[RMDB]
RNA sequence: GGGAACGACUCGAGUAGAGUCGAAAAGUCUUACCGCUUUACAGAUGAGCGAAGGUGCGGGCGGCUUCCUGCACCAGACAAUGGAAACUUCUAAGGAAGCCGUGGCUAACUUAACACACAAGCGCAAACCGAUAUGCAUAUUCGUAUGCAUAUCGGUAAAAGAAACAACAACAACAAC
Reactivity to DMS in 0.01 (KOAc 150mM, MgCl2 10mM, bicine 150mM(pH8.5), 24C), signal-to-noise 4, nucleotides 027 to 126: g020u010c020u010u010a190c140c020g020c010u010u000u000a300c140a110g000a130u000g010a070g030c060g030a110a090g020g020u000g030c060g030g000g000c000g000g000c010u000u000c000c000u000g030c260a140c010c000a020g000a070c190a090a070u000g000g020a100a130a170c160u010u010c120u010a130a030g000g000a030a010g020c000c000g020u000g000g000c010u000a110a080c050u020u000a050a070c050a060c090a060c110a070a070g010c050g020c130a070a130
Reactivity to 2A3 in 0.01 (KOAc 150mM, MgCl2 10mM, bicine 150mM(pH8.5), 24C), signal-to-noise 4, nucleotides 027 to 126: g020u020c020u050u070a060c030c020g010c030u080u050u110a140c090a130g170a200u100g010a100g050c030g040a060a020g030g030u070g020c040g000g110g010c020g000g000c000u020u010c000c000u030g030c050a050c010c000a010g090a060c060a030a150u070g010g030a100a080a070c110u160u040c060u180a060a100g000g000a000a010g000c000c010g000u010g000g010c010u000a020a030c020u140u150a120a010c060a000c010a000c020a110a070g060c040g000c080a040a110

Chemical mapping of a 177-nucleotide RNA with DMS and 2A3. It was measured as part of the RMDB library OK2TST. Values cover nucleotides 27 to 126.